RNA sequence: GGGAACGACUCGAGUAGAGUCGAAAACGUGGAACGAAGCCGAAGUGGUCUGGAACGGCCCGCCGUAGAGGGUGAUAGCCCCGUAGGCGUAAGUUCCACGGUUACAAGGCGGGGUAUCCUGAGUACCGUUAUCCUUUAUCUUCGGAUAAAGGAUAACAAAAGAAACAACAACAACAAC
Reactivity to DMS in 0.01 (KOAc 150mM, MgCl2 10mM, bicine 150mM(pH8.5), 24C), signal-to-noise 6, nucleotides 027 to 126: c010g060u000g010g010a020a010c010g010a130a300g010c010c010g000a020a030g010u010g000g010u000c010u000g000g070a300a050c010g000g000c020c030c000g040c010c020g030u000a040g010a300g010g000g000u000g020a180u000a080g030c020c000c010c010g000u010a300g000g000c010g000u010a050a290g000u000u000c010c000a000c010g010g010u000u000a060c130a110a130g000g010c050g000g010g000g000u000a100u000c020c020u000g000a100g000u010a080c090c090
The record gives the reactivity of an RNA of 177 nucleotides to DMS. The reactions ran in a buffer of 150 mM KOAc, 10 mM MgCl2 and 150 mM bicine (pH 8.5), at 24 C. DMS adducts were read by reverse transcription with MarathonRT. For DMS, 5,678 sequencing reads were counted.